Structure probing data (2A3 and DMS) for a 177-nucleotide construct.
For DMS the reverse transcriptase was MarathonRT.
The DMS profile rests on 6,033 reads.

RNA sequence: GGGAACGACUCGAGUAGAGUCGAAAAGAUAUGGAAUCUGUAGGGAGCUCGUGGUCGGAAACGACCAUACGAGCAUCGAUCUACCAGAUUCCUAAGUCAAACGAUCUAUAGUUCGCUAUAGAUCGAACGUUGUUAUGAAGUUCGCUUCAUAACAACGAAAAGAAACAACAACAACAAC
Reactivity to 2A3 in 0.01 (KOAc 150mM, MgCl2 10mM, bicine 150mM(pH8.5), 24C), signal-to-noise 3, nucleotides 027 to 126: g010a000u020a010u050g000g000a000a010u000c010u020g010u010a010g000g000g040a030g010c010u000c010g020u010g000g000u000c010g000g010a010a010a010c010g000a000c000c010a020u150a090c070g000a010g000c000a010u210c020g000a010u000c000u010a010c050c050a000g000a020u000u000c000c000u000a000a010g020u000c030a050a090a150c040g000a000u000c000u000a010u000a010g040u070u070c300g000c190u000a000u010a000g000a010u000c000g000a040a010
Reactivity to DMS in 0.01 (KOAc 150mM, MgCl2 10mM, bicine 150mM(pH8.5), 24C), signal-to-noise 4, nucleotides 027 to 126: g010a010u000a060u020g000g000a010a000u010c000u000g010u000a010g010g000g010a020g050c000u000c020g010u000g000g030u010c000g000g000a020a030a020c010g030a020c010c000a040u010a050c250g020a010g020c000a200u000c250g010a040u020c000u000a030c120c190a010g000a010u000u000c000c000u000a000a080g000u010c020a090a090a270c030g010a010u000c010u010a000u000a010g010u000u010c280g020c010u010a000u000a010g010a010u000c000g000a050a090
The 2A3 profile rests on 16,313 reads. The reactions ran in a buffer of 150 mM KOAc, 10 mM MgCl2 and 150 mM bicine (pH 8.5), at 24 C.